[RMDB]
RNA sequence: GGGAACGACUCGAGUAGAGUCGAAAAGCAUUCCACUUCGGUGGAAUGCAAAUGCCGGCUCCAAGAAAAGUGCUUCAAAGAGUGGGAGCACUGCCGAAGAAAAAAGUUCCAUGUUCGCAUGGAACAAUCAUGAAAAUUUGUUCGCAAAUUUUCAUGAAAAAGAAACAACAACAACAAC
Reactivity to DMS in 0.01 (KOAc 150mM, MgCl2 10mM, bicine 150mM(pH8.5), 24C), signal-to-noise 2, nucleotides 027 to 126: g010c000a010u000u000c000c000a000c000u000u010c220g040g020u010g000g000a000a000u000g000c020a040a020a070u000g010c090c050g030g000c060u000c050c050a090a120g000a050a050a010a030g040u000g000c000u000u000c010a050a100a190g000a170g020u000g000g010g010a000g000c000a000c000u000g000c140c010g000a090a110g020a010a060a040a060a110a100g000u000u000c000c000a010u000g040u000u030c190g040c000a030u010g000g000a000a020c000a030a070
Reactivity to 2A3 in 0.01 (KOAc 150mM, MgCl2 10mM, bicine 150mM(pH8.5), 24C), signal-to-noise 2, nucleotides 027 to 126: g000c000a000u000u010c000c010a010c010u030u040c170g100g000u040g000g000a010a000u000g000c000a010a020a050u090g030c000c010g030g020c010u090c130c040a070a000g050a080a110a010a010g010u010g010c010u000u000c020a100a180a100g150a160g080u130g040g020g010a020g030c000a000c000u000g000c010c000g070a140a110g120a060a180a010a020a010a010g000u000u000c020c000a010u020g060u010u050c180g010c090a000u010g000g020a000a010c000a000a040
An RNA of 177 nucleotides, treated with DMS and 2A3 and read out base by base. For DMS, 1,265 sequencing reads were counted. For DMS the reverse transcriptase was MarathonRT. The reactions ran in a buffer of 150 mM KOAc, 10 mM MgCl2 and 150 mM bicine (pH 8.5), at 24 C. Reactivities are given for positions 27 through 126.